[RMDB]
RNA sequence: GGGAACGACUCGAGUAGAGUCGAAAAGCGUACUACUGAUCGGGGAGAAGCUCAACAGCUUCUAAUCUAGCUUUCCCAAAUAGGAAAGCUACUAGAAGACAUGAGCUUUGAAAGACGAUCAGUAUCGCAAACAAGGAUAUCUUCGGAUAUCCUUGAACAUACUAAACUGGUUCGCCAGUUUAGUAUGAAAAGAAACAACAACAACAAC
Reactivity to 2A3 in 0.01 (KOAc 150mM, MgCl2 10mM, bicine 150mM(pH8.5), 24C), signal-to-noise 6, nucleotides 027 to 156: g000c010g020u110a060c040u000a000c000u030g000a000u000c000g010g020g030g010a200g020a030a000g000c000u000c000a040a110c050a150g030c000u000u000c000u000a010a020u060c030u010a000g000c000u000u010u030c020c000c020a180a300a140u240a060g000g010a000a000a000g000c000u000a000c000u000a000g000a010a000g010a010c040a110u040g000a000g000c000u000u000u010g030a030a010a000g230a030c000g000a000u000c000a000g000u000a000u010c000g000c020a020a080a040c010a000a000g010g000a010u000a000u010c010u070u130c240g000g000a000u000a000u010c040c000u010u000g000a000a000
Reactivity to DMS in 0.01 (KOAc 150mM, MgCl2 10mM, bicine 150mM(pH8.5), 24C), signal-to-noise 4, nucleotides 027 to 156: g030c010g020u000a060c090u000a010c000u010g000a020u000c010g010g030g010g010a300g000a010a010g030c000u000c000a040a090c110a220g010c000u010u000c000u000a020a040u000c030u010a010g010c000u000u000u000c010c000c010a030a150a200u000a050g000g000a000a010a010g020c000u000a000c010u000a020g010a040a020g000a050c050a300u000g010a020g000c000u000u010u000g000a190a160a160g010a130c000g010a010u000c000a020g000u000a010u000c000g030c020a120a090a200c010a010a020g000g010a010u000a010u000c000u020u000c300g010g020a020u000a010u000c000c000u000u000g000a050a150